[RMDB]
RNA sequence: GGGAACGACUCGAGUAGAGUCGAAAACUGCAGGUCAACGGUACUUCUUCAGAUCAGCUAUUGCAGAAGAUAGGUUAUCCAAGCGCUCUGGGCCAGUGCGACUGUAUAUAGGAGCUUAUGAUUUAAACCAGAAGCUAACUCUCUCCGAAACAAUGAGCUAUAGGGUACCUUUCGAGGUACCCUAUAGAAAAGAAACAACAACAACAAC
Reactivity to DMS in 0.01 (KOAc 150mM, MgCl2 10mM, bicine 150mM(pH8.5), 24C), signal-to-noise 2, nucleotides 027 to 156: c040u060g030c050a110g030g050u020c030a050a090c170g010g020u000a070c050u010u000c000u020u010c030a040g010a040u000c050a150g050c040u000a070u000u000g000c020a180g000a110a120g000a080u020a040g030g040u000u000a070u000c070c070a080a060g050c050g010c060u000c010u020g000g030g000c080c040a060g050u000g020c020g010a130c060u000g020u010a090u000a080u000a090g020g010a110g030c000u000u000a050u000g000a110u000u000u010a000a110a080c060c020a020g010a080a090g010c010u000a070a070c060u010c040u000c030u000c020c010g000a080a040a060c100a040a150u020g010a120g020
Reactivity to 2A3 in 0.01 (KOAc 150mM, MgCl2 10mM, bicine 150mM(pH8.5), 24C), signal-to-noise 2, nucleotides 027 to 156: c030u030g000c020a010g030g030u110c050a030a050c120g030g000u070a040c040u050u060c000u080u070c050a000g000a090u040c030a020g030c030u070a070u150u140g070c020a010g000a080a010g010a160u140a020g070g020u060u060a050u080c000c020a060a020g030c030g010c030u060c040u040g040g040g010c010c000a030g000u010g050c020g040a050c030u000g060u060a050u000a040u040a280g090g000a020g000c030u020u100a030u120g110a110u070u140u230a080a130a010c000c000a010g040a100a000g030c010u050a030a030c000u020c000u020c000u040c130c030g030a000a030a060c050a040a230u140g020a040g050
The record gives the reactivity of an RNA of 207 nucleotides to DMS and 2A3. Conditions: 150 mM KOAc, 10 mM MgCl2 and 150 mM bicine (pH 8.5), 24 C. Source: RMDB library OK3TST, as collected in RNAgym. For 2A3, 864 sequencing reads were counted.